The data come from the RNA Mapping Database (RMDB), library OK1LIB. The record gives the reactivity of an RNA of 177 nucleotides to 2A3 and DMS. 2A3 adducts were read by reverse transcription with SuperScript II with manganese. The RNA was probed in 150 mM KOAc, 10 mM MgCl2 and 150 mM bicine (pH 8.5) at 24 C.
[RMDB]
RNA sequence: GGGAACGACUCGAGUAGAGUCGAAAACACUGCGGGGGAGACUGGAUAUCCUGGUGUAGCGGUGGGAUGCGCAGAUGUCGGGAGGAACACUGGUGGCGAGGGCGGGUAUCUGGGCAGUGACUGGCGCGAUUAUAUUAUAUUUCGAUAUAAUAUAAUCAAAAGAAACAACAACAACAAC
Reactivity to 2A3 in 0.01 (KOAc 150mM, MgCl2 10mM, bicine 150mM(pH8.5), 24C), signal-to-noise 4, nucleotides 027 to 126: c060a010c030u070g000c040g000g030g020g010g000a040g030a020c020u040g040g020a020u030a040u120c000c000u030g030g010u060g020u050a030g020c020g010g070u080g050g010g000a030u070g010c030g000c010a010g020a060u030g030u050c020g010g010g020a050g040g010a070a010c040a020c030u040g060g000u050g020g010c050g010a090g000g010g060c080g010g000g010u020a020u010c010u010g010g020g000c010a010g000u010g020a020c020u020g010g020c020g000c010
Reactivity to DMS in 0.01 (KOAc 150mM, MgCl2 10mM, bicine 150mM(pH8.5), 24C), signal-to-noise 4, nucleotides 027 to 126: c060a080c060u010g020c060g010g010g000g000g000a070g010a110c080u020g010g010a080u020a080u030c030c040u000g000g010u030g010u010a100g000c050g010g000u020g000g010g010a090u010g010c060g000c030a090g010a060u020g000u010c080g000g000g000a100g000g000a080a070c120a060c060u020g000g010u010g020g000c090g000a100g000g000g000c100g000g000g000u010a020u020c030u000g020g000g010c050a060g010u010g010a060c070u000g000g010c070g020c100